[RMDB]
Structure probing data (DMS and 2A3) for a 177-nucleotide construct. Values cover nucleotides 27 to 126. The RNA was probed in 150 mM KOAc, 10 mM MgCl2 and 150 mM bicine (pH 8.5) at 24 C. The data come from the RNA Mapping Database (RMDB), library OK1LIB.
RNA sequence: GGGAACGACUCGAGUAGAGUCGAAAAUGUCGAAGCAGAAAAUGGAGGCAGACCUCUAUGUUGAUCCUCCUCCUGAUUAUUAUGGAGGUGAUUUCUUUGCUACUCCUUCUGCUCCUCUAGGAGAGGAGCCGUAGGUAUGCUUCGGCAUACCUACGGCAAAAGAAACAACAACAACAAC
Reactivity to DMS in 0.01 (KOAc 150mM, MgCl2 10mM, bicine 150mM(pH8.5), 24C), signal-to-noise 3, nucleotides 027 to 126: u010g010u020c040g010a050a050g020c010a040g010a060a060a090a060u020g000g000a020g030g020c080a080g020a050c060c040u000c040u030a010u000g030u010u000g010a080u020c040c060u000c010c010u010c040c020u010g000a110u040u030a050u040u000a040u010g010g010a010g010g030u000g000a170u000u020u030c020u010u010u000g000c040u030a150c040u010c000c010u020u000c010u010g000c000u000c010c000u000c010u010a110g020g040a190g010a030g010g010a040
Reactivity to 2A3 in 0.01 (KOAc 150mM, MgCl2 10mM, bicine 150mM(pH8.5), 24C), signal-to-noise 6, nucleotides 027 to 126: u170g030u070c050g030a040a000g020c020a010g060a050a120a010a030u200g010g010a010g000g000c040a020g020a120c020c010u080c030u050a110u150g130u080u130g030a060u030c000c030u040c010c000u040c000c020u080g060a120u010u240a090u120u100a070u200g010g010a010g000g020u010g000a010u010u080u040c090u070u100u080g030c020u080a130c010u010c000c000u020u060c010u010g020c000u020c000c000u040c010u070a230g030g190a110g050a010g040g010a010